RNA sequence: GGGAACGACUCGAGUAGAGUCGAAAAGAUAUGGACUAGGUGGGUCCAGCUUUGAUCUCGGAAACGAGGGAGCUGGCCACUAGUCCUAAGUCAAAGAGGAUAGUCGCGUUCGCGCGACUAUCCUCAACAGUACUUACUACUUCGGUAGUAAGUACUGAAAAGAAACAACAACAACAAC
Reactivity to 2A3 in 0.01 (KOAc 150mM, MgCl2 10mM, bicine 150mM(pH8.5), 24C), signal-to-noise 7, nucleotides 027 to 126: g010a010u060a060u130g030g010a010c020u030a060g300g300u170g150g080g080u300c000c000a000g010c000u250u200u090g040a110u070c010u000c010g030g030a130a080a040c010g010a000g020g010g000a000g000c000u000g010g000c010c000a010c000u000a000g000u000c000c000u000a020a000g040u010c020a090a000a170g000a000g000g000a010u000a010g000u000c000g010c020g030u080u110c300g000c000g000c000g140a000c000u000a000u000c000c000u000c000a000a000
Reactivity to DMS in 0.01 (KOAc 150mM, MgCl2 10mM, bicine 150mM(pH8.5), 24C), signal-to-noise 5, nucleotides 027 to 126: g000a040u000a300u000g010g000a010c000u000a010g000g020u000g010g020g010u010c010c000a000g000c000u000u010u010g010a060u010c010u000c000g000g000a140a080a200c010g010a030g010g010g000a020g010c000u000g010g000c010c000a020c000u000a000g000u010c000c000u000a010a050g000u000c040a080a090a140g000a010g000g000a020u000a010g010u000c000g000c000g030u000u010c220g020c000g030c000g000a000c000u000a000u000c000c000u000c000a000a040

The data come from the RNA Mapping Database (RMDB), library TTRDEL. Structure probing data (2A3 and DMS) for a 177-nucleotide construct. For 2A3 the reverse transcriptase was SuperScript II with manganese. The RNA was probed in 150 mM KOAc, 10 mM MgCl2 and 150 mM bicine (pH 8.5) at 24 C. Reactivities are given for positions 27 through 126.